[RMDB]
Chemical mapping of a 207-nucleotide RNA with DMS and 2A3. The data come from the RNA Mapping Database (RMDB), library OK3TST. For 2A3, 1,176 sequencing reads were counted.

RNA sequence: GGGAACGACUCGAGUAGAGUCGAAAAGAUUCUGCCAGGGCAGGAAAUUCACUCUCAGAAGCAUGUUCCACUCAAGCGGACUUGGCCUGCGCUGUGAGUCAAUGUAAAGAGGGUGUGUUGGCUUCGGCUGGUUGACCUUCAGAAGUCGGAGAAGGCACAGCCCAGUAUUAUUCGUAAUACUGGGCUGAAAAGAAACAACAACAACAAC
Reactivity to DMS in 0.01 (KOAc 150mM, MgCl2 10mM, bicine 150mM(pH8.5), 24C), signal-to-noise 1, nucleotides 027 to 156: g030a170u010u000c030u000g020c040c040a100g050g020g010c040a110g000g020a010a050a120u000u000c040a040c020u000c010u000c000a110g010a190a180g010c000a020u000g010u000u000c070c030a090c020u020c040a150a090g000c000g020g000a050c060u000u010g040g020c040c020u000g030c030g050c070u000g030u000g020a030g020u000c040a070a060u020g010u000a030a150a300g010a070g040g030g030u000g000u000g010u020u000g000g000c010u000u020c050g070g010c050u000g010g010u000u010g020a120c060c020u010u000c050a130g000a090a140g020u020c030g000g010a160g000a060a100g010g030c060a300
Reactivity to 2A3 in 0.01 (KOAc 150mM, MgCl2 10mM, bicine 150mM(pH8.5), 24C), signal-to-noise 2, nucleotides 027 to 156: g020a090u030u010c010u020g030c030c050a110g020g110g040c060a030g100g000a090a090a020u130u060c000a010c020u040c000u010c030a020g020a210a020g010c010a020u090g070u130u110c080c020a020c020u080c020a100a000g020c040g060g050a090c050u070u140g130g030c020c060u090g030c010g010c030u070g040u010g200a000g030u050c070a060a060u050g070u140a150a090a050g010a000g030g000g000u020g010u000g000u020u040g070g010c000u000u000c000g050g000c010u030g020g050u120u080g080a180c010c020u020u010c020a040g020a210a000g040u100c060g030g010a030g010a010a000g060g020c030a010